[RMDB]
Conditions: 150 mM KOAc, 10 mM MgCl2 and 150 mM bicine (pH 8.5), 24 C. An RNA of 207 nucleotides, treated with DMS and 2A3 and read out base by base. It was measured as part of the RMDB library OK3TST. For 2A3 the reverse transcriptase was SuperScript II with manganese. For DMS the reverse transcriptase was MarathonRT.
RNA sequence: GGGAACGACUCGAGUAGAGUCGAAAAGUGCAAUAGUACAUGCUUGUAGUCCCAGUUACUCUGGAGGCUGAGUUGGGAGGAUCACUUGAGUCCAGGAGAUGGAGGACGCAGUGAACUGUGAUUGCACCACUGCACUCCAGCCUGGGUGAUGGAGUGAGUGGAAGAACUUAUUCGUAAGUUCUUCCACAAAAGAAACAACAACAACAAC
Reactivity to DMS in 0.01 (KOAc 150mM, MgCl2 10mM, bicine 150mM(pH8.5), 24C), signal-to-noise 3, nucleotides 027 to 156: g010u000g000c060a060a030u000a100g030u000a100c080a070u020g020c030u020u000g020u010a080g010u000c000c000c010a200g020u000u000a060c090u010c030u010g010g020a120g000g030c000u000g010a060g030u000u000g010g030g020a140g000g010a160u000c030a030c040u000u010g010a160g010u010c000c010a110g020g010a070g000a130u000g000g000a100g030g010a150c160g040c010a040g000u000g000a060a060c040u010g030u000g000a170u000u010g030c020a070c030c010a050c020u000g000c010a090c010u000c000c000a040g000c040c010u000g000g000g030u000g010a120u000g010g000a070g020u010g010a150
Reactivity to 2A3 in 0.01 (KOAc 150mM, MgCl2 10mM, bicine 150mM(pH8.5), 24C), signal-to-noise 7, nucleotides 027 to 156: g080u060g000c030a060a150u070a100g090u100a070c060a090u120g050c040u110u090g100u130a040g020u010c010c010c000a020g020u060u110a050c070u040c020u090g040g020a060g030g000c030u030g010a020g090u070u040g040g020g010a060g030g020a030u030c010a010c040u020u040g030a010g040u010c010c010a020g010g010a130g020a100u030g010g000a010g010g030a040c130g000c000a000g000u010g040a100a050c090u070g020u050g160a300u140u300g020c010a020c090c000a000c010u010g000c010a000c010u000c000c000a030g050c020c010u020g030g020g010u030g010a050u070g040g000a010g020u020g010a010